[RMDB]
RNA sequence: GGGAACGACUCGAGUAGAGUCGAAAAACGGAUGGUACGCCAUGCGACCAUUGGGUAGAAGCGUUCAAUCAGCACCGUGACGGUGCAGAUGGGAAAUUGCCCAUGAUACGCACCAUACGUGGUGCGAAAAAGCCAUCGGUGUUCGCACCGAUGGCAACACCCUAUUGCACUUCGGUGCAAUAGGGUGAAAAGAAACAACAACAACAAC
Reactivity to 2A3 in 0.01 (KOAc 150mM, MgCl2 10mM, bicine 150mM(pH8.5), 24C), signal-to-noise 2, nucleotides 027 to 156: a000c020g090g000a000u010g010g000u070a070c250g010c030c040a050u130g070c020g050a030c000c060a120u110u090g000g000g040u020a060g020a100a020g050c040g060u040u080c060a040a040u000c000a000g010c000a000c000c000g160u190g230a170c260g020g000u020g000c020a000g000a000u020g000g050g020a040a080a030u050u070g020c000c000c000a010u040g070a030u020a020c030g000c010a000c000c000a000u050a050c180g050u060g010g030u000g000c000g030a050a050a030a000a020g020c000c000a000u000c000g000g000u040g000u040u100c180g000c040a000c000c000g000a020u000g000g000c000a000a000
This 207-nucleotide RNA was probed chemically with 2A3.
The reactions ran in a buffer of 150 mM KOAc, 10 mM MgCl2 and 150 mM bicine (pH 8.5), at 24 C.
Reactivities are given for positions 27 through 156.
For 2A3, 1,069 sequencing reads were counted.